The data come from the RNA Mapping Database (RMDB), library M2RFOK. The record gives the reactivity of an RNA of 207 nucleotides to DMS and 2A3.

RNA sequence: GGGAACGACUCGAGUAGAGUCGAAAAAUCCUCAGGUUCAUAAGCGUGAUGAUUGGGUGUUCAUGCUCCAUGCAUGACAUGUGCCUCCAUUGAACCUUGUUACGACCUUGGCACAUUACCCAUCUGAAAAAGACGUUCGCGUUCGCGCGAACGUCAAGUUCCAUUAGAACUUCGGUUCUAAUGGAACAAAAGAAACAACAACAACAAC
Reactivity to DMS in 0.01 (KOAc 150mM, MgCl2 10mM, bicine 150mM(pH8.5), 24C), signal-to-noise 1, nucleotides 027 to 156: a100u010c020c010u000c020a020g000g010u000u000c030a000u000a100a140g000c140g000u000g000a190u000g010a060u000u010g040g050g000u010g030u000u030c000a020u000g010c010u000c160c220a200u030g000c000a030u020g010a030c280a210u000g000u000g030c010c000u010c070c030a280u000u000g010a010a020c010c050u010u020g020u010u000a150c100g000a060c110c100u100u000g010g010c050a030c020a080u000u000a070c000c020c000a100u000c000u000g000a040a050a150a190a140g020a040c010g010u000u000c000g030c000g050u000u010c300g000c030g050c030g030a010a020c000g000u000c030a000a080
Reactivity to 2A3 in 0.01 (KOAc 150mM, MgCl2 10mM, bicine 150mM(pH8.5), 24C), signal-to-noise 3, nucleotides 027 to 156: a000u020c010c000u020c020a000g000g000u010u010c020a020u070a260a080g060c050g140u120g080a080u060g010a040u120u220g020g000g010u060g040u080u040c000a000u010g010c020u110c190c100a070u300g000c000a000u000g010a010c010a020u020g000u000g010c000c010u020c050c030a060u000u040g010a010a000c010c000u020u110g100u070u100a110c070g000a060c030c080u050u060g010g000c000a000c000a030u020u140a040c000c000c000a000u000c030u050g030a100a040a010a000a020g010a000c000g000u000u000c000g000c000g010u040u060c200g030c000g000c000g080a000a000c000g000u000c000a000a000
The RNA was probed in 150 mM KOAc, 10 mM MgCl2 and 150 mM bicine (pH 8.5) at 24 C. 2A3 adducts were read by reverse transcription with SuperScript II with manganese. DMS adducts were read by reverse transcription with MarathonRT. Values are in units of 0.01, from 0 to 300, in steps of 10.